[RMDB]
RNA sequence: GGGAACGACUCGAGUAGAGUCGAAAAAGCAGCAGCGUUUGCAGAGAAGUGAUCGUGACAGUUGGUAGACAACAUCGGGUACUCCAGCUACAUCCGAUACUCCCAGAUCUGUGCAAAAGCAGUGAGAGAUGCACUGAAGACAGAAUUCAAAGCAAAAGGAUUUAAUAAAUUUCGAUUUAUUAAAUCCAAAAGAAACAACAACAACAAC
Reactivity to DMS in 0.01 (KOAc 150mM, MgCl2 10mM, bicine 150mM(pH8.5), 24C), signal-to-noise 2, nucleotides 027 to 156: a040g010c040a070g040c040a120g020c070g020u000u010u000g000c030a120g010a180g020a090a050g020u000g030a020u010c020g020u000g000a130c090a090g010u010u000g020g000u020a140g000a110c020a060a040c090a290u000c080g000g010g030u000a080c030u000c010c030a090g020c020u000a040c040a040u010c010c050g010a140u000a080c080u010c010c010c000a210g010a110u000c020u000g040u000g030c050a050a080a150a250g000c010a000g020u000g030a180g030a050g040a100u000g020c040a120c040u000g010a060a090g000a160c070a080g000a120a100u000u010c050a050a040a100g000c070a040a100a120a250
Reactivity to 2A3 in 0.01 (KOAc 150mM, MgCl2 10mM, bicine 150mM(pH8.5), 24C), signal-to-noise 4, nucleotides 027 to 156: a000g020c030a010g000c020a020g010c020g040u100u110u060g040c040a020g030a010g000a160a050g030u100g050a050u040c030g030u060g050a030c040a040g000u010u010g010g030u100a030g030a070c030a070a030c020a120u090c030g110g000g000u030a070c010u010c040c000a000g010c010u030a040c020a040u000c000c010g020a010u020a060c010u030c010c000c000a010g030a090u010c000u030g000u020g060c040a040a050a070a000g050c000a010g000u030g030a050g010a010g000a050u090g050c030a020c010u030g020a020a020g040a030c030a010g050a020a040u150u130c060a070a040a020g110c000a000a060a120a060
This 207-nucleotide RNA was probed chemically with DMS and 2A3.
For 2A3 the reverse transcriptase was SuperScript II with manganese.
Values cover nucleotides 27 to 156.
DMS adducts were read by reverse transcription with MarathonRT.